[RMDB]
RNA sequence: GGGAACGACUCGAGUAGAGUCGAAAAGAAGCAUGAGGGCGACGUCCCACCUGAGUCCUCUUUGUUCAGGUAAGCAAAAGUAUAUUCUUAUUUUUCUAUUUUCUAGUGAUUUUUCAGUUAGGCGCUGUACUCGUAAUGCUUUCGAGCAUUACGAGUAAAAAGAAACAACAACAACAAC
Reactivity to 2A3 in 0.01 (KOAc 150mM, MgCl2 10mM, bicine 150mM(pH8.5), 24C), signal-to-noise 2, nucleotides 027 to 126: g030a030a000g080c050a060u110g080a050g000g040g040c060g010a030c000g060u040c000c070c000a020c010c060u030g020a010g030u080c000c020u030c000u100u090u030g010u040u090c040a030g010g020u150a100a000g030c030a040a050a020a020g090u090a180u020a100u120u070c030u070u110a120u080u060u020u010u020c040u040a180u060u110u080u050c040u080a020g050u010g110a140u090u080u080u040u070c020a000g000u040u040a070g070g030c030g000c050u040g010
Reactivity to DMS in 0.01 (KOAc 150mM, MgCl2 10mM, bicine 150mM(pH8.5), 24C), signal-to-noise 2, nucleotides 027 to 126: g000a070a160g000c100a120u070g010a070g000g030g020c070g000a190c240g000u000c010c000c000a080c100c040u000g020a200g000u010c010c050u000c050u000u020u000g000u010u020c030a010g010g020u040a100a080g010c070a070a060a030a070g000u010a070u000a070u030u010c000u000u000a120u000u010u000u000u000c010u000a120u030u030u000u000c010u020a030g020u030g000a060u000u000u000u010u000c000a080g000u000u000a060g000g030c070g010c040u000g000
Structure probing data (2A3 and DMS) for a 177-nucleotide construct. Conditions: 150 mM KOAc, 10 mM MgCl2 and 150 mM bicine (pH 8.5), 24 C. The data come from the RNA Mapping Database (RMDB), library OK1LIB.